[RMDB]
The data come from the RNA Mapping Database (RMDB), library TTRDEL. Chemical mapping of a 177-nucleotide RNA with DMS and 2A3. The 2A3 profile rests on 7,367 reads. The reactions ran in a buffer of 150 mM KOAc, 10 mM MgCl2 and 150 mM bicine (pH 8.5), at 24 C. For DMS the reverse transcriptase was MarathonRT.
RNA sequence: GGGAACGACUCGAGUAGAGUCGAAAAGAUAUGGACCUAGGAGGGAGCUUGAUCGGAAACGAUAAGCAUCGAUCUCCGGGUCCUAAGUCAAAACCUACUAGUAUUCCUUCGGGAAUACUAGUAGGAAGUAUGUCUUUGUGUUCGCACAAAGACAUACAAAAGAAACAACAACAACAAC
Reactivity to DMS in 0.01 (KOAc 150mM, MgCl2 10mM, bicine 150mM(pH8.5), 24C), signal-to-noise 3, nucleotides 027 to 126: g000a070u000a300u000g000g000a000c000c000u010a080g050g000a010g000g000g000a060g030c010u000u000g000a020u000c000g020g000a100a070a130c020g020a010u000a020a030g010c000a220u000c160g020a090u030c010u000c010c000g000g000g010u000c000c000u010a010a080g000u000c020a120a040a100a130c000c000u000a010c000u000a010g000u000a010u000u000c000c000u000u010c190g000g020g000a000a000u000a000c000u000a000g000u000a000g000g000a000a050
Reactivity to 2A3 in 0.01 (KOAc 150mM, MgCl2 10mM, bicine 150mM(pH8.5), 24C), signal-to-noise 4, nucleotides 027 to 126: g020a000u070a030u140g000g000a000c020c040u080a300g000g020a010g010g030g000a020g010c000u050u090g260a030u040c020g000g030a090a040a040c010g000a010u010a010a000g000c030a190u300c040g040a110u010c010u000c000c000g000g010g010u000c000c000u000a030a010g040u000c020a010a030a070a190c010c000u000a000c000u010a000g010u010a000u010u000c010c000u040u110c300g040g000g020a010a000u000a010c000u000a000g000u000a000g000g010a000a000